Chemical mapping of a 177-nucleotide RNA with DMS and 2A3. 2A3 adducts were read by reverse transcription with SuperScript II with manganese.

[RMDB]
RNA sequence: GGGAACGACUCGAGUAGAGUCGAAAAAUGGCUUCCUGGAAGGCCCACCGUUGGGCAUUGACGUUGGCGCUAGCGGCAUCGCGUCGCUCCAGUGAGGCACCAAAGCUGUAGAGCGCCACUGCGAGCAAUGAUGGUAAUACUUCGGUAUUACCAUCAUAAAAGAAACAACAACAACAAC
Reactivity to DMS in 0.01 (KOAc 150mM, MgCl2 10mM, bicine 150mM(pH8.5), 24C), signal-to-noise 8, nucleotides 027 to 126: a090u050g010g020c020u000u000c010c010u010g010g010a080a150g000g000c000c000c010a100c230c210g020u040u030g010g010g010c020a090u020u020g010a050c060g010u010u020g000g010c020g000c010u010a090g010c050g010g010c030a090u020c140g010c050g020u000c010g010c110u000c030c020a030g010u030g010a050g000g020c010a110c060c030a070a100a140g000c020u000g000u010a070g000a090g010c020g000c010c000a080c060u010g010c040g010a070g010c070a160
Reactivity to 2A3 in 0.01 (KOAc 150mM, MgCl2 10mM, bicine 150mM(pH8.5), 24C), signal-to-noise 9, nucleotides 027 to 126: a020u170g110g000c000u020u000c010c000u000g030g030a070a050g090g000c010c010c010a080c080c170g230u180u180g000g000g000c050a040u030u170g040a030c080g020u040u060g010g000c010g000c030u030a040g040c030g070g000c050a080u180c110g050c080g060u020c020g000c010u000c000c000a040g020u060g250a040g010g020c020a040c010c020a030a070a020g010c020u040g010u080a030g020a010g050c000g000c000c000a010c020u050g000c030g050a030g010c020a030